About this RNA: Chemical mapping of a 177-nucleotide RNA with 2A3 and DMS. For 2A3 the reverse transcriptase was SuperScript II with manganese. It was measured as part of the RMDB library OK2TST. Values cover nucleotides 27 to 126. Conditions: 150 mM KOAc, 10 mM MgCl2 and 150 mM bicine (pH 8.5), 24 C.
RNA sequence: GGGAACGACUCGAGUAGAGUCGAAAAAUGCCUUUGAAAAAGCAAAAACCACCUAUGGCAUUAUUGGGGUGAAAGUAUGGAUUAACAGGGGGAUGAUCUAUGCAAAGGGUUUAAACAGAACCCCAGCCAUAGCCAAUUACUUCGGUAAUUGGCUAUGAAAAGAAACAACAACAACAAC
Reactivity to 2A3 in 0.01 (KOAc 150mM, MgCl2 10mM, bicine 150mM(pH8.5), 24C), signal-to-noise 1, nucleotides 027 to 126: a000u090g020c040c000u130u070u080g120a180a140a000a000a000g050c030a060a060a040a080a000c010c020a040c010c040u130a090u060g040g020c080a020u000u030a050u140u160g000g000g000g000u040g040a020a000a000g000u000a000u040g000g040a010u020u060a240a300c300a300g000g000g020g070g090a000u030g010a000u020c040u070a000u030g000c010a040a110a000g020g000g060u090u010u040a130a060a020c030a000g010a030a030c000c050c010c000a000g010c000
Reactivity to DMS in 0.01 (KOAc 150mM, MgCl2 10mM, bicine 150mM(pH8.5), 24C), signal-to-noise 3, nucleotides 027 to 126: a090u010g010c010c000u010u010u020g030a050a080a120a280a120g020c090a030a030a080a100a100c060c030a080c110c060u010a070u010g010g000c030a040u000u000a080u010u000g010g000g010g010u010g000a120a050a080g000u000a020u000g010g000a030u000u000a060a110c070a110g000g010g000g000g010a210u000g000a010u000c020u000a010u000g010c030a030a090a130g000g000g000u000u010u000a040a090a130c220a110g010a070a040c020c000c000c060a060g010c160